[RMDB]
RNA sequence: GGGAACGACUCGAGUAGAGUCGAAAAAUGGCCGACGGGGCGCGCGCGGCCGGGAGGGGCGGGGCGGACGCACAGCCGCGUUUAGUCUAGCGCAGCGGUCGCGAGCGCUCUGGGUAUCCUGUCCUGACACUUGUAUUAGGUUCGCCUAAUACAAGUGAAAAGAAACAACAACAACAAC
Reactivity to DMS in 0.01 (KOAc 150mM, MgCl2 10mM, bicine 150mM(pH8.5), 24C), signal-to-noise 2, nucleotides 027 to 126: a060u010g000g010c090c060g010a160c030g010g010g020g020c010g030c010g000c010g030c010g010g000c000c010g010g020g010a140g020g000g020g030c030g000g000g010g010c000g010g010a020c000g000c010a100c200a180g000c230c150g020c000g010u000u010u000a060g020u010c040u010a110g020c010g000c040a250g000c010g010g000u000c020g030c010g010a030g000c010g000c000u010c010u000g000g010g020u000a090u000c010c030u000g000u010c020c000u000g020a300
Reactivity to 2A3 in 0.01 (KOAc 150mM, MgCl2 10mM, bicine 150mM(pH8.5), 24C), signal-to-noise 1, nucleotides 027 to 126: a000u050g040g000c000c000g030a080c030g000g000g000g000c000g010c000g020c000g000c020g030g000c000c030g030g070g020a080g050g050g050g000c060g000g000g000g000c010g000g000a040c030g040c020a060c080a090g170c090c090g030c010g000u000u010u030a110g000u000c020u040a040g060c080g000c040a030g100c010g000g020u040c030g010c000g000a010g000c000g000c000u010c010u000g020g000g000u010a090u060c000c010u010g060u040c000c030u020g030a010